[RMDB]
RNA sequence: GGGAACGACUCGAGUAGAGUCGAAAAGGAGACACAUGCACAAUAUCGAGCGUGGACACCAAGGACUCCUCUUUGUGGUGGUCAGAGCUGUGGCAGGACAUGGAUUGUCUGGGGGAAGAAGAUGGAGGAUGAGAAGAGGACCAUGGACCAGACUCAGCCUAACGCUUCAAUUCGUUGAAGCGUUAGGAAAAGAAACAACAACAACAAC
Reactivity to DMS in 0.01 (KOAc 150mM, MgCl2 10mM, bicine 150mM(pH8.5), 24C), signal-to-noise 2, nucleotides 027 to 156: g020g020a130g000a140c080a040c020a070u010g060c080a050c030a110a090u020a150u000c040g000a050g000c020g010u010g030g010a140c110a130c030c010a070a120g030g030a120c020u000c070c020u020c040u020u000u000g040u010g000g010u010g030g020u000c130a080g020a070g000c020u010g040u020g010g000c060a080g030g010a020c030a050u000g010g010a060u010u000g020u000c020u000g030g000g020g020g010a040a080g010a030a080g000a100u000g000g000a130g000g000a100u000g010a180g000a020a090g000a110g020g000a140c050c040a160u000g000g010a040c060c020a140g020a090c040u010c030a230g050
Reactivity to 2A3 in 0.01 (KOAc 150mM, MgCl2 10mM, bicine 150mM(pH8.5), 24C), signal-to-noise 3, nucleotides 027 to 156: g040g000a040g020a010c040a010c000a090u100g060c030a040c020a070a170u090a110u300c120g030a020g030c060g030u060g010g040a040c020a030c060c050a040a040g040g000a050c030u030c020c010u010c050u060u100u130g060u100g050g010u020g010g050u060c040a020g010a020g030c070u030g010u100g080g000c040a050g030g010a010c010a030u090g060g020a060u110u130g040u040c050u070g010g000g010g000g000a050a010g020a020a010g030a010u110g030g000a020g010g010a050u060g060a020g010a100a000g000a040g000g020a020c000c010a030u070g000g020a030c000c000a010g030a090c030u030c050a000g020